The record gives the reactivity of an RNA of 207 nucleotides to 2A3. The RNA was probed in 150 mM KOAc, 10 mM MgCl2 and 150 mM bicine (pH 8.5) at 24 C.
RNA sequence: GGGAACGACUCGAGUAGAGUCGAAAAAGCUGGCAGUACUACGGUACUACCAGCAUAAUUCGUGGUUCGAAAACCUCCCACGCAAAAAAACUAAGGAAAAACGCCGAGUAGUACGCUACUCGGCGAAGGUACCGGAAUCAGUUCGCUGAUUCCGGAAGAUCUAUAGGAUCUUCGGAUCCUAUAGAUCAAAAGAAACAACAACAACAAC
Reactivity to 2A3 in 0.01 (KOAc 150mM, MgCl2 10mM, bicine 150mM(pH8.5), 24C), signal-to-noise 2, nucleotides 027 to 156: a000g000c000u020g010g000c000a000g040u000a000c000u020a010c130g090g000u000a000c010u010a000c010c000a010g000c000a000u070a020a060u080u110c020g000u000g010g040u070u110c040g040a080a100a130a190c030c040u060c010c000c000a010c000g160c100a040a060a070a030a020a010a090c120u190a110a160g030g070a090a010a040a000a000c000g000c000c020g000a000g000u000a010g000u010a000c080g020c070u000a000c000u000c000g000g040c000g000a000a010g010g000u000a040c000c000g000g000a000a000u000c010a000g050u050u150c220g010c130u000g000a000u010u000c000c000g000g010a000a010